[RMDB]
RNA sequence: GGGAACGACUCGAGUAGAGUCGAAAAGUCCUGCCAUGAGACGGCAACGAGAGCAUGUCGCAUCGAAUGGACUCGGGGAGUCGGCAGCUUGCCCCACGGAUGAGCGCCUAAUGCCGGCAUUCGGGAAAAUAGACUGGAUAGUUCGCUAUCCAGUCAAUCGUUUGUCAUACUUCGGUAUGACAAACGAAAAAGAAACAACAACAACAAC
Reactivity to 2A3 in 0.01 (KOAc 150mM, MgCl2 10mM, bicine 150mM(pH8.5), 24C), signal-to-noise 2, nucleotides 027 to 156: g070u060c010c000u000g090c010c000a040u080g010a020g020a060c010g060g020c000a010a040c070g130a050g000a020g230c080a080u040g020u030c000g010c080a070u020c010g030a020a000u020g020g020a100c010u000c040g010g000g000g000a110g040u020c010g030g000c000a010g010c010u070u080g010c010c000c010c060a100c140g000g020a180u100g020a010g020c030g030c010c040u080a100a090u090g030c000c000g000g010c000a000u040u030c000g040g040g000a010a080a040a140u160a040g020a010c000u010g000g000a000u000a010g040u040u090c160g020c100u000a000u010c010c000a000g000u000c000a000a000
Conditions: 150 mM KOAc, 10 mM MgCl2 and 150 mM bicine (pH 8.5), 24 C. The record gives the reactivity of an RNA of 207 nucleotides to 2A3. The 2A3 profile rests on 1,486 reads.